The data come from the RNA Mapping Database (RMDB), library RNAMAK. Structure probing data (2A3) for a 207-nucleotide construct. The RNA was probed in 150 mM KOAc, 10 mM MgCl2 and 150 mM bicine (pH 8.5) at 24 C.
RNA sequence: GGGAACGACUCGAGUAGAGUCGAAAAACCUUUGUGAUGUAUGGAGCUAUCCUGUGGAGGACGCACCCAUUGGGUGCGUCUCCCCACCCAUCUAAGGAUAGCUAUGAAGUACAUCACUCUGGUAAAACGAUUUCCAACGUUCGCGUUGGAAAUCGAACCGUAGAAGCUGUUUCGACAGCUUCUACGGAAAAGAAACAACAACAACAAC
Reactivity to 2A3 in 0.01 (KOAc 150mM, MgCl2 10mM, bicine 150mM(pH8.5), 24C), signal-to-noise 1, nucleotides 027 to 156: a000c010c000u010u010u010g000u000g030a010u010g000u000a020u030g040g010a010g000c000u000a000u000c010c030u010g030u090g020g050a040g030g010a000c010g040c000a000c000c000c200a300u150u300g010g020g010u000g050c010g000u020c020u140c030c020c000c010a030c050c010c020a210u140c170u260a040a020g000g000a000u000a000g000c000u020a080u070g010a010a000g000u000a000c000a000u000c000a000c000u000c000u000g000g010u010a070a090a000a080c020g020a020u000u000u000c000c000a000a000c000g020u080u080c240g020c020g170u030u010g000g000a000a000a000u000c000g000a040a040
Reactivities are given for positions 27 through 156. For 2A3, 1,009 sequencing reads were counted.